[RMDB]
RNA sequence: GGGAACGACUCGAGUAGAGUCGAAAAUAUAUGAAGAUGUAUACUACGAGUUGUGUAUUUAUAUACAAAUGACAUAGUAAAAGUUCUAUGUUAAUUAUAAGAAGGAAAGGAGGUAAGAUAGGAAUAACCUCAACUGUAUUUUCGAAUACAGUUGAGGAAAAGAAACAACAACAACAAC
Reactivity to DMS in 0.01 (KOAc 150mM, MgCl2 10mM, bicine 150mM(pH8.5), 24C), signal-to-noise 4, nucleotides 027 to 126: u060a120u030a080u020g010a190a270g010a010u000g000u050a190u010a020c010u010a100c050g000a060g010u010u010g000u000g010u000a050u010u020u030a060u020a060u000a060c070a060a050a070u010g000a010c030a020u000a010g000u000a050a080a130a150g000u030u010c000u000a010u000g000u000u000a060a050u000u010a050u000a030a080g000a060a050g000g000a070a050a060g010g000a050g010g010u010a040a050g010a080u020a050g000g020a070a060u040a080a160
Reactivity to 2A3 in 0.01 (KOAc 150mM, MgCl2 10mM, bicine 150mM(pH8.5), 24C), signal-to-noise 3, nucleotides 027 to 126: u230a020u060a070u120g050a070a090g010a030u040g070u270a040u030a020c020u020a110c040g000a000g020u010u070g010u000g040u030a060u000u140u030a180u040a010u010a030c030a040a120a040u040g000a000c010a010u010a000g060u070a050a210a170a140g040u070u060c000u020a000u010g000u000u020a030a000u070u140a060u040a160a070g070a020a010g040g010a130a010a010g050g050a020g000g010u020a030a040g020a080u070a070g070g040a080a040u020a070a020
The data come from the RNA Mapping Database (RMDB), libraries RFM100 and RFMREP.
The record gives the reactivity of an RNA of 177 nucleotides to DMS and 2A3.
For DMS the reverse transcriptase was MarathonRT.
Values cover nucleotides 27 to 126.